[RMDB]
RNA sequence: GGGAACGACUCGAGUAGAGUCGAAAAGUCGUCUGUUCCUAUCCUGGUGCUGCAUAAGACACCAAGGGUGGGGCUGUUCGCCCAUUAAAAGGGAUCCUGAGAUGGGUUCACUACGUCGCGAGACAGUUAGCUCUUAUGCUUUCGAGCAUAAGAGCUAAAAAGAAACAACAACAACAAC
Reactivity to 2A3 in 0.01 (KOAc 150mM, MgCl2 10mM, bicine 150mM(pH8.5), 24C), signal-to-noise 4, nucleotides 027 to 126: g070u070c010g000u000c030u040g070u120u200c010c000u010a000u050c000c000u010g000g000u000g010c030u020g000c060a110u060a300a040g020a130c010a010c000c020a070a090g020g000g000u010g000g010g000g000c010u020g020u040u130c040g050c000c010c010a080u170u220a070a080a060a030g050g000g000a010u030c000c000u030g010a020g010a050u060g000g010g000u000u010c030a080c060u120a030c080g020u020c010g000c010g030a020g000a050c010a020g010u020
Reactivity to DMS in 0.01 (KOAc 150mM, MgCl2 10mM, bicine 150mM(pH8.5), 24C), signal-to-noise 2, nucleotides 027 to 126: g000u020c050g010u000c020u010g030u020u000c000c020u000a000u000c010c000u000g000g020u000g020c010u000g000c250a080u090a120a120g010a230c010a040c000c010a020a100g010g000g030u000g000g010g000g000c000u000g000u000u000c020g000c010c030c030a100u020u040a030a080a150a090g000g000g030a030u000c030c000u010g000a290g000a080u010g010g000g000u000u010c030a090c050u020a070c100g000u020c000g000c180g000a210g000a000c010a130g030u030

Chemical mapping of a 177-nucleotide RNA with 2A3 and DMS. For 2A3 the reverse transcriptase was SuperScript II with manganese. Source: RMDB libraries RFM100 and RFMREP, as collected in RNAgym. The RNA was probed in 150 mM KOAc, 10 mM MgCl2 and 150 mM bicine (pH 8.5) at 24 C.